Source: RMDB library RNAMAK, as collected in RNAgym. Structure probing data (2A3) for a 207-nucleotide construct. Values cover nucleotides 27 to 156. The RNA was probed in 150 mM KOAc, 10 mM MgCl2 and 150 mM bicine (pH 8.5) at 24 C. 2A3 adducts were read by reverse transcription with SuperScript II with manganese. The 2A3 profile rests on 982 reads.
[RMDB]
RNA sequence: GGGAACGACUCGAGUAGAGUCGAAAAGUGAUUGAUUCGUCAAUCACAAAAAGAUAUGGAGCCUCAAUUCUUUUGACGCUUCAGUGUCGGAAACGACACAGAAGAAGCGAUAAGAAUUAGGGCUCCUAAGUCAAAAACUCCUAGUUCGCUAGGAGAAGUAUUUCAUGGUCUUCGGACCAUGAAAUACAAAAGAAACAACAACAACAAC
Reactivity to 2A3 in 0.01 (KOAc 150mM, MgCl2 10mM, bicine 150mM(pH8.5), 24C), signal-to-noise 1, nucleotides 027 to 156: g000u020g000a000u020u000g000a000u040u150c160g070u000c080a000a000u000c000a000c000a000a200a010a010a000g000a000u030a020u040g000g000a000g000c000c000u030c030a000a000u020u000c030u010u160u150u110g220a180c050g000c000u000u010c050a020g000u000g010u000c020g000g030a010a090a010c000g010a000c000a030c010a020g150a240a000g000a000a000g000c000g000a030u030a050a030g000a000a000u010u010a060g000g010g000c000u000c000c000u000a010a010g000u000c010a030a030a030a090a120c000u050c030c000u010a010g020u020u030c300g000c080u010a010g010g030a000g000a080a000